Chemical mapping of a 177-nucleotide RNA with 2A3 and DMS. The DMS profile rests on 2,492 reads. 2A3 adducts were read by reverse transcription with SuperScript II with manganese. Values cover nucleotides 27 to 126.

[RMDB]
RNA sequence: GGGAACGACUCGAGUAGAGUCGAAAAGACUGCGUGCACUAGAGACGAUAUCGAGCCGGAAAUUAAUCGAUAAUGUCUCGUGUAGUGGAUACGAUCCGGCAAGUAUCGACUACGUGUGCUCGUAGGAGAUAGCACCCAGGUUCGCCUGGGUGCUAUCAAAAGAAACAACAACAACAAC
Reactivity to 2A3 in 0.01 (KOAc 150mM, MgCl2 10mM, bicine 150mM(pH8.5), 24C), signal-to-noise 5, nucleotides 027 to 126: g050a010c000u000g000c000g010u020g000c000a000c000u010a010g010a000g000a020c010g010a010u010a010u040c000g000a000g000c000c000g000g110a100a120a090u290u240a130a160u110c010g000a000u020a050a080u120g010u010c000u000c000g010u060g010u010a010g000u020g130g000a000u010a020c010g010a020u010c000c000g000g000c040a060a030g000u000a000u000c020g050a000c000u010a030c000g090u030g000u000g010c010u010c010g000u000a000g000g010a040
Reactivity to DMS in 0.01 (KOAc 150mM, MgCl2 10mM, bicine 150mM(pH8.5), 24C), signal-to-noise 1, nucleotides 027 to 126: g020a150c000u000g060c010g010u000g000c010a000c000u070a200g000a000g000a040c000g010a110u000a000u010c010g000a060g000c020c000g060g000a100a120a080u060u010a080a100u000c000g000a030u020a020a050u000g010u000c020u000c000g010u030g010u020a010g000u000g010g000a040u010a000c000g020a110u040c000c000g020g010c000a110a100g000u000a000u000c000g010a000c000u000a020c000g010u050g000u000g050c000u020c000g010u000a000g030g000a040